[RMDB]
RNA sequence: GGGAACGACUCGAGUAGAGUCGAAAAGAUAUGGAGGUAUAUGUGCACCAGUUGUAGACAUGACGUCGCACUCGGAAACGAGUGCGGCGUCAACAGCUACACCUGGUGCACAUAUACCUCCUAAGUCCAGUAUGACGUACUUCGGUACGUCAUACUGAAAAGAAACAACAACAACAAC
Reactivity to DMS in 0.01 (KOAc 150mM, MgCl2 10mM, bicine 150mM(pH8.5), 24C), signal-to-noise 1, nucleotides 027 to 126: g010a110u050a300u000g000g010a050g000g000u000a000u020a010u000g000u000g040c000a020c010c020a030g010u000u000g030u010a000g000a040c150a300u010g040a000c020g110u010c020g000c000a020c000u000c000g000g000a140a090a290c000g060a010g030u000g010c000g020g000c000g000u000c000a000a040c210a290g010c000u000a000c000a010c030c020u000g000g040u000g000c000a000c000a000u000a000u000a020c000c000u000c000c000u000a000a020g000u000c050